[RMDB]
RNA sequence: GGGAACGACUCGAGUAGAGUCGAAAAGGAGCGACAAGUAUAUAGCUUGAGAUAGCUAAAUCACCUCGGUAUGAUUAGGGUGAGACCUAGGAACCGUAGGGGUAUUCUCAAAGGAAGCUUUUGCAGUGAAGGAAGAUACGAUUCGUCGUAUCUUCAACGAGUUGUUAGGUUUCGACCUAACAACUCGAAAAGAAACAACAACAACAAC
Reactivity to DMS in 0.01 (KOAc 150mM, MgCl2 10mM, bicine 150mM(pH8.5), 24C), signal-to-noise 1, nucleotides 027 to 156: g000g020a040g000c040g070a100c030a020a020g030u000a120u010a050u000a100g000c000u010u000g000a150g010a210u000a040g030c040u000a040a130a150u000c050a040c060c030u000c030g020g030u000a090u000g000a280u000u000a040g000g000g040u010g010a260g020a200c040c000u030a030g000g030a130a020c010c000g010u010a040g000g000g050g020u010a060u000u020c020u000c050a060a080a180g050g000a040a130g000c040u000u000u000u000g010c030a040g000u000g000a100a230g040g010a050a030g000a020u010a010c000g000a160u020u000c300g030u000c020g030u030a000u000c000u000u000c020a020a140
Reactivity to 2A3 in 0.01 (KOAc 150mM, MgCl2 10mM, bicine 150mM(pH8.5), 24C), signal-to-noise 2, nucleotides 027 to 156: g050g000a010g030c040g070a070c000a070a010g060u020a080u060a020u050a180g010c030u030u010g010a010g000a070u060a040g020c020u060a110a020a110u100c030a060c030c000u040c060g000g010u280a120u250g050a070u070u080a010g000g040g030u050g120a040g050a080c000c010u010a030g020g000a030a030c000c000g030u070a050g010g000g000g000u020a070u070u050c040u000c000a030a050a010g060g030a060a010g030c000u040u080u140u180g040c070a080g030u050g090a110a060g070g000a000a000g010a010u000a000c010g010a000u010u040c140g040u020c000g000u100a000u040c000u000u000c000a000a000